[RMDB]
RNA sequence: GGGAACGACUCGAGUAGAGUCGAAAAAGAGCAAUGGAAGCUCAGGACUAAAAAACGUCAGCCGUAGGCUUUCCUAUAGCCGCAGGCCUGCCUGUCAGUGUGCGCGGCCUCUGCUCGCAAUGUCCGCAGCGCCUUCCUAUGAGGCCGCAGUCUGCCAGUAGUGAAUGUUCUUCGGAACAUUCACUACAAAAGAAACAACAACAACAAC
Reactivity to DMS in 0.01 (KOAc 150mM, MgCl2 10mM, bicine 150mM(pH8.5), 24C), signal-to-noise 1, nucleotides 027 to 156: a230g000a120g050c020a090a050u030g020g020a130a140g010c060u000c000a050g000g000a140c030u000a010a060a080a060a130a150c060g010u000c050a090g000c030c020g080u000a240g000g020c100u000u000u020c080c120u000a020u000a050g010c000c040g080c060a200g020g000c020c010u000g030c040c020u040g000u000c000a040g020u000g000u000g010c010g050c030g010g020c000c000u030c020u010g040c030u010c000g020c090a060a050u000g000u000c040c030g010c070a140g000c160g000c010c000u000u000c020c020u010a100u010g010a090g050g000c020c000g040c020a010g010u000c050u010g000c010c050a300
Reactivity to 2A3 in 0.01 (KOAc 150mM, MgCl2 10mM, bicine 150mM(pH8.5), 24C), signal-to-noise 2, nucleotides 027 to 156: a000g070a010g000c060a100a090u220g150g050a200a030g000c000u020c030a050g000g020a010c020u170a030a010a030a110a060a110c060g020u040c040a010g020c030c020g170u200a050g000g000c030u070u040u130c000c020u140a120u140a190g010c040c000g010c060a010g000g000c000c000u030g000c010c000u100g030u150c050a080g040u060g070u130g120c040g000c000g030g000c000c000u030c000u010g000c020u030c020g030c040a050a210u180g020u120c080c020g000c020a030g010c020g040c030c010u040u040c020c000u080a130u160g000a020g000g000c000c000g000c010a030g020u000c010u010g080c030c010a030
Chemical mapping of a 207-nucleotide RNA with DMS and 2A3. The data come from the RNA Mapping Database (RMDB), library ARCHII. High 2A3 reactivity points to a flexible backbone, as in loops and unpaired stretches. For 2A3, 1,096 sequencing reads were counted.